The record gives the reactivity of an RNA of 177 nucleotides to 2A3 and DMS. High 2A3 reactivity points to a flexible backbone, as in loops and unpaired stretches. For 2A3 the reverse transcriptase was SuperScript II with manganese. Conditions: 150 mM KOAc, 10 mM MgCl2 and 150 mM bicine (pH 8.5), 24 C. Values are in units of 0.01, from 0 to 300, in steps of 10. The 2A3 profile rests on 3,084 reads.
[RMDB]
RNA sequence: GGGAACGACUCGAGUAGAGUCGAAAACGGCCUUGCCCUAGCGGCCAGCUUUAACCCGGUGCUGGCCCGGUCCUCGGGCAAAGCGAUCGGCCGGGAGGCGCGCAGUCGCGGGUUCAACGUGCAACUGUCUAGGACAAAACUUCGGUUUUGUCCUAGAAAAAGAAACAACAACAACAAC
Reactivity to 2A3 in 0.01 (KOAc 150mM, MgCl2 10mM, bicine 150mM(pH8.5), 24C), signal-to-noise 4, nucleotides 027 to 126: c020g060g000c000c000u020u070g010c030c010c010u030a020g030c020g040g000c040c000a010g000c020u040u080u150a100a100c000c020c000g020g020u140g020c010u020g000g060c000c020c000g060g030u190c020c070u110c020g020g000g000c060a040a100a010g040c000g050a150u160c060g050g020c000c000g000g000g000a030g000g050c100g000c020g010c070a020g010u090c020g010c000g040g010g000u060u090c080a110a070c070g070u080g040c030a080a080c060u070g030
Reactivity to DMS in 0.01 (KOAc 150mM, MgCl2 10mM, bicine 150mM(pH8.5), 24C), signal-to-noise 3, nucleotides 027 to 126: c080g000g010c010c050u010u020g010c110c090c010u010a090g000c140g010g000c000c010a100g000c030u000u010u060a060a200c040c000c010g000g000u020g000c010u000g000g020c010c010c040g020g000u030c110c040u040c080g030g030g010c030a020a070a010g000c010g010a040u020c190g010g010c000c010g000g010g010a200g020g000c090g040c070g000c070a130g000u000c080g030c010g000g000g000u020u000c130a100a110c100g010u030g000c040a040a070c040u060g000